Chemical mapping of a 177-nucleotide RNA with DMS and 2A3.
RNA sequence: GGGAACGACUCGAGUAGAGUCGAAAACUAUGAGGUCAGCUCUGUACAUGUGCUGGAAGAGCAAUUAGCGGGGUGCCUAAGCAGUGUCCAUCAUGGACGUGGGUCUCUGCUGGCCACGCAAGGGGAACCGAUGAAUUAUAUUCGUAUAAUUCAUCGGAAAAGAAACAACAACAACAAC
Reactivity to DMS in 0.01 (KOAc 150mM, MgCl2 10mM, bicine 150mM(pH8.5), 24C), signal-to-noise 9, nucleotides 027 to 126: c040u010a070u000g010a090g020g010u000c070a100g020c020u000c020u000g010u010a140c110a060u010g020u010g000c060u000g000g010a130a050g000a050g020c030a090a100u010u000a100g020c020g000g000g010g030u010g020c030c020u010a080a100g010c050a060g010u000g000u000c000c010a080u010c150a150u000g000g010a060c110g010u000g000g000g000u010c020u000c030u000g000c020u000g000g010c010c020a050c040g010c060a130a090g000g000g000g020a180a280
Reactivity to 2A3 in 0.01 (KOAc 150mM, MgCl2 10mM, bicine 150mM(pH8.5), 24C), signal-to-noise 8, nucleotides 027 to 126: c030u050a110u240g120a060g030g080u070c040a010g010c010u000c020u060g080u110a060c020a100u200g070u090g130c060u030g030g070a060a020g030a010g020c030a070a140u140u070a140g000c010g010g040g020g030u170g020c020c010u060a100a020g020c030a030g030u020g010u040c020c010a050u130c060a100u280g110g040a050c040g010u050g000g010g040u050c020u000c000u040g000c000u010g000g010c010c010a010c020g020c010a030a050g020g000g010g000a010a030
The 2A3 profile rests on 15,483 reads. The RNA was probed in 150 mM KOAc, 10 mM MgCl2 and 150 mM bicine (pH 8.5) at 24 C. It was measured as part of the RMDB library OK2TRN.